[RMDB]
RNA sequence: GGGAACGACUCGAGUAGAGUCGAAAAUCGAUCGUACACGCUCCAUGCAGUCUCAUGCUGACUAGCGAGAGGAUCGGUACCAUGCAUAGUACCGCGCGCCAUGGAUCCGUGCGGAUCAUACUGGAUCUAUGUAGAUUGCCUUCGGGCAAUCUACAUAAAAAGAAACAACAACAACAAC
Reactivity to 2A3 in 0.01 (KOAc 150mM, MgCl2 10mM, bicine 150mM(pH8.5), 24C), signal-to-noise 2, nucleotides 027 to 126: u050c020g000a020u020c030g030u100a020c030a000c030g020c020u010c020c000a030u070g020c000a030g080u040c010u080c030a070u270g000c020u040g160a300c100u180a010g000c020g030a060g010a040g120g070a090u070c010g000g010u000a020c030c000a110u190g000c060a170u150a170g010u020a040c000c010g050c000g030c040g080c110c030a030u100g050g000a020u070c100c010g000u000g040c050g000g020a000u010c020a020u010a070c050u080g010g030a020u000c030
Reactivity to DMS in 0.01 (KOAc 150mM, MgCl2 10mM, bicine 150mM(pH8.5), 24C), signal-to-noise 2, nucleotides 027 to 126: u010c150g060a020u000c040g030u010a300c040a060c030g020c300u020c030c030a030u000g000c040a070g000u010c080u000c080a100u000g030c020u010g000a190c250u010a070g000c010g000a100g010a060g000g000a080u010c010g030g010u000a070c020c050a100u000g010c220a140u000a090g010u000a050c010c000g040c120g030c130g000c130c000a030u000g010g010a010u000c090c000g000u010g020c120g010g000a040u000c020a140u020a100c130u000g020g000a130u010c070
The data come from the RNA Mapping Database (RMDB), library OK2TRN. An RNA of 177 nucleotides, treated with 2A3 and DMS and read out base by base. For 2A3, 1,623 sequencing reads were counted. Values cover nucleotides 27 to 126. For 2A3 the reverse transcriptase was SuperScript II with manganese.